The data come from the RNA Mapping Database (RMDB), library OK3TST. Chemical mapping of a 207-nucleotide RNA with 2A3 and DMS. The RNA was probed in 150 mM KOAc, 10 mM MgCl2 and 150 mM bicine (pH 8.5) at 24 C.
RNA sequence: GGGAACGACUCGAGUAGAGUCGAAAAAAUAAUCAAAUCGUUAUUAACUUCAUAAGAGUAGUUACCACUCACAUAUAGAUUCCAUAUGUUUGUGUUCAGACUAGUACCACAGAAAUUAUCAUAAAGCGUAAAUAUCUUACUCCCAUUAUCAUUACUAAUACAAUAACCCAUUCGUGGGUUAUUGUAUAAAAGAAACAACAACAACAAC
Reactivity to 2A3 in 0.01 (KOAc 150mM, MgCl2 10mM, bicine 150mM(pH8.5), 24C), signal-to-noise 3, nucleotides 027 to 156: a010a000u150a010a000u080c060a050a030a070u110c020g030u010u030a050u170u100a040a070c020u090u090c080a040u090a170a040g050a020g040u050a030g000u010u070a070c020c000a000c020u010c010a010c000a000u010a020u020a060g130a120u220u050c080c030a010u050a010u060g010u000u060u070g010u010g010u050u050c020a020g010a030c000u040a020g040u080a100c000c000a020c010a030g050a050a030a010u160u060a070u070c040a040u080a080a120a040g030c000g040u020a000a130a020u100a070u020c050u030u020a080c030u060c000c010c010a040u060u080a040u050c050a060u110u230a080c010u300a030
Reactivity to DMS in 0.01 (KOAc 150mM, MgCl2 10mM, bicine 150mM(pH8.5), 24C), signal-to-noise 2, nucleotides 027 to 156: a070a050u010a050a040u000c040a040a090a150u010c100g010u000u000a100u020u000a050a050c020u000u000c030a120u020a070a150g000a150g030u000a060g010u000u000a080c240c020a040c060u010c070a070c010a030u020a050u000a080g010a170u010u010c060c010a040u000a090u000g050u000u010u010g020u010g040u010u000c080a100g010a040c040u010a070g020u010a140c050c020a070c100a140g000a100a010a030u010u010a040u000c060a090u000a100a030a030g000c050g000u010a060a040a080u020a050u000c080u010u010a060c070u000c010c010c000a150u000u000a130u000c060a050u010u010a140c040u010a150
Background: Values cover nucleotides 27 to 156. For DMS the reverse transcriptase was MarathonRT. For 2A3, 1,371 sequencing reads were counted.